[RMDB]
RNA sequence: GGGAACGACUCGAGUAGAGUCGAAAAGGUAACCCAGCAGGGGGGAGGUAGUUAAAUGGCACUAGGAGGAGGCAACAGCAUAGACAUCCUUAUCAGGGCAACUGAUAGGGCAUCUCAAGUUUUAAACAAUGUAAGUAACGCCAGCAAGUCACUAGGCACCAAUAGAAUAAUUCGUUAUUCUAUUGGUAAAAGAAACAACAACAACAAC
Reactivity to DMS in 0.01 (KOAc 150mM, MgCl2 10mM, bicine 150mM(pH8.5), 24C), signal-to-noise 2, nucleotides 027 to 156: g000g020u000a060a180c040c010c000a160g000c070a130g020g000g020g010g010g010a070g020g010u020a090g020u000u000a070a070a130u020g000g030c060a160c050u000a140g030g000a070g000g000a080g000g000c020a010a090c060a100g080c020a130u000a080g020a070c050a110u010c010c010u030u000a060u000c010a020g000g040g030c170a160a130c020u000g020a020u000a040g020g000g090c260a020u000c030u000c070a070a180g000u000u000u000u000a070a090a120c020a090a050u010g030u000a040a130g010u000a050a120c040g010c020c020a050g030c030a050a080g020u000c000a040c000u020a110g070g030c090
Reactivity to 2A3 in 0.01 (KOAc 150mM, MgCl2 10mM, bicine 150mM(pH8.5), 24C), signal-to-noise 2, nucleotides 027 to 156: g040g010u020a030a050c010c020c010a030g010c090a030g010g020g000g000g020g000a000g010g010u040a000g010u040u060a030a060a070u080g000g010c020a010c070u010a040g000g000a010g030g000a010g010g000c060a050a020c000a020g010c000a020u010a020g010a020c020a060u060c000c000u000u030a000u010c000a000g000g060g130c050a220a130c090u000g000a000u000a010g040g000g000c020a050u000c010u010c070a040a060g030u020u040u170u240a080a040a040c080a030a080u120g050u150a030a010g020u010a040a000c020g010c040c000a020g000c050a040a000g040u030c000a020c090u060a060g010g050c050

Conditions: 150 mM KOAc, 10 mM MgCl2 and 150 mM bicine (pH 8.5), 24 C. Structure probing data (DMS and 2A3) for a 207-nucleotide construct. For 2A3, 1,304 sequencing reads were counted. DMS adducts were read by reverse transcription with MarathonRT. It was measured as part of the RMDB library OK3TST. For 2A3 the reverse transcriptase was SuperScript II with manganese.